This 177-nucleotide RNA was probed chemically with DMS and 2A3.
Values are in units of 0.01, from 0 to 300, in steps of 10.
The reactions ran in a buffer of 150 mM KOAc, 10 mM MgCl2 and 150 mM bicine (pH 8.5), at 24 C.
For 2A3 the reverse transcriptase was SuperScript II with manganese.
[RMDB]
RNA sequence: GGGAACGACUCGAGUAGAGUCGAAAAUCAAGUCAUCAUGGCCCUUACGCCUAGGGCGACACACGUGCUACAAUGGCAUAUACAAUGAGACGCAAUACCGCGAGGUGGAGCAAAUCUAUAAAAUAUGCAAGUAACUAUCAUUCGUGAUAGUUACUUGAAAAGAAACAACAACAACAAC
Reactivity to DMS in 0.01 (KOAc 150mM, MgCl2 10mM, bicine 150mM(pH8.5), 24C), signal-to-noise 9, nucleotides 027 to 126: u030c070a100a100g010u000c050a070u010c080a100u010g020g010c010c020c020u000u010a090c170g000c090c060u000a040g000g000g010c010g000a100c090a070c190a100c140g010u000g010c050u000a080c140a080a080u020g020g010c010a020u000a070u000a070c200a090a090u010g000a030g010a150c240g020c030a040a260u040a030c020c010g000c210g000a130g000g010u000g000g010a300g000c030a040a090a070u010c050u000a090u020a080a080a050a060u020a040u010g000
Reactivity to 2A3 in 0.01 (KOAc 150mM, MgCl2 10mM, bicine 150mM(pH8.5), 24C), signal-to-noise 9, nucleotides 027 to 126: u090c050a050a030g100u020c020a060u020c020a050u150g100g000c000c010c010u020u080a080c090g060c030c030u060a030g010g020g040c020g060a010c030a000c010a000c070g040u040g040c010u110a090c080a150a160u150g050g000c030a020u070a000u030a070c090a060a100u150g010a010g010a030c070g000c010a010a020u030a060c000c010g010c030g040a050g000g010u010g010g010a020g000c000a010a070a020u010c020u020a080u110a100a100a040a060u180a050u120g040